[RMDB]
RNA sequence: GGGAACGACUCGAGUAGAGUCGAAAAAUUGAUAGAUACCGCGCUGCCGGCGUCGAGACCGUCCAACACGGGGAGUUUUCAGAUUCCGAUGAUUCACGGGUCUGUCCGAUCUGUGAAAGCCUGGACGGUCGCGAAAUCCCACUCCGGACCAUCGAUGCAGUUGGAUGUAUUUCGAUACAUCCAACUGAAAAGAAACAACAACAACAAC
Reactivity to 2A3 in 0.01 (KOAc 150mM, MgCl2 10mM, bicine 150mM(pH8.5), 24C), signal-to-noise 1, nucleotides 027 to 156: a010u030u130g000a000u020a250g060a000u060a150c010c010g020c010g040c050u090g060c030c000g020g000c080g050u030c010g000a060g000a020c000c020g010u000c000c000a030a000c020a030c050g000g020g100g010a050g040u060u120u130u040c000a040g000a100u300u190c020c020g040a200u100g020a130u230u160c060a000c000g000g000g020u000c020u020g000u030c050c050g030a010u000c000u030g040u000g110a170a080a090g000c010c050u030g000g000a000c000g000g000u000c000g010c000g010a030a000a010u000c000c000c000a020c000u080c030c020g130g000a140c000c000a060u220c010g070a050u180g020